[RMDB]
RNA sequence: GGGAACGACUCGAGUAGAGUCGAAAAACGCUGGUGUACGCACCAGCGAAAGCAAAAUGAGGAGGUUAUAUGAUCUGAAGUAUCUAAUGUUGAUAAUUCAAGGUCUUCAAAGUUCUCUGAUUGCUAAGGAAUAGUUACACUUCGGUGUAACUAUUCCAAAAGAAACAACAACAACAAC
Reactivity to DMS in 0.01 (KOAc 150mM, MgCl2 10mM, bicine 150mM(pH8.5), 24C), signal-to-noise 2, nucleotides 027 to 126: a100c010g020c000u020g010g010u010g020u010a070c160g020c000a000c000c000a000g000c000g010a010a080a030g000c000a000a010a110a180u030g000a020g020g010a020g000g020u000u010a110u010a030u010g010a030u010c010u000g000a020a020g000u000a010u010c010u010a110a110u030g010u020u000g020a000u000a010a060u000u000c010a020a060g000g000u010c000u000u000c130a070a050a080g010u000u010c000u000c010u000g000a300u000u000g000c000u000a060a120
Reactivity to 2A3 in 0.01 (KOAc 150mM, MgCl2 10mM, bicine 150mM(pH8.5), 24C), signal-to-noise 5, nucleotides 027 to 126: a000c030g000c000u010g010g040u010g020u070a030c290g000c110a010c000c000a000g000c000g020a040a000a000g010c000a020a000a010a070u110g000a020g010g030a010g050g060u260u090a160u070a070u250g010a010u000c000u020g000a010a010g010u020a000u000c040u080a120a200u300g140u260u100g050a010u010a010a030u020u010c040a120a110g000g000u000c000u050u050c060a140a120a070g070u050u030c000u000c000u020g020a070u010u000g000c010u010a060a130

Record summary:
Structure probing data (DMS and 2A3) for a 177-nucleotide construct. For 2A3 the reverse transcriptase was SuperScript II with manganese. Conditions: 150 mM KOAc, 10 mM MgCl2 and 150 mM bicine (pH 8.5), 24 C.